[RMDB]
Structure probing data (DMS) for a 177-nucleotide construct.
The DMS profile rests on 1,149 reads.
The RNA was probed in 150 mM KOAc, 10 mM MgCl2 and 150 mM bicine (pH 8.5) at 24 C.
Source: RMDB library TTRDEL, as collected in RNAgym.

RNA sequence: GGGAACGACUCGAGUAGAGUCGAAAAGAUAUGGAUCUCUCCGAGUUCGUUGAAAUCGGAAACGAUGGAGAACGAGGAGAGGAUCCUAAGUCAAACGACCAGACUUACUUCGGUAAGUCUGGUCGAACUAGCAUAGUCUCUUCGGAGACUAUGCUAGAAAAGAAACAACAACAACAAC
Reactivity to DMS in 0.01 (KOAc 150mM, MgCl2 10mM, bicine 150mM(pH8.5), 24C), signal-to-noise 2, nucleotides 027 to 126: g010a080u000a300u000g000g020a030u000c000u010c000u000c000c030g020a300g030u000u000c000g000u000u000g000a090a080a010u010c030g000g000a150a070a150c000g010a030u000g000g000a140g000a000a050c000g010a300g000g010a000g000a000g000g000a000u000c000c000u000a030a100g000u000c050a100a120a240c020g000a020c010c000a010g000a000c000u000u000a000c000u000u030c180g050g000u010a000a010g000u000c000u000g000g000u000c000g000a010a070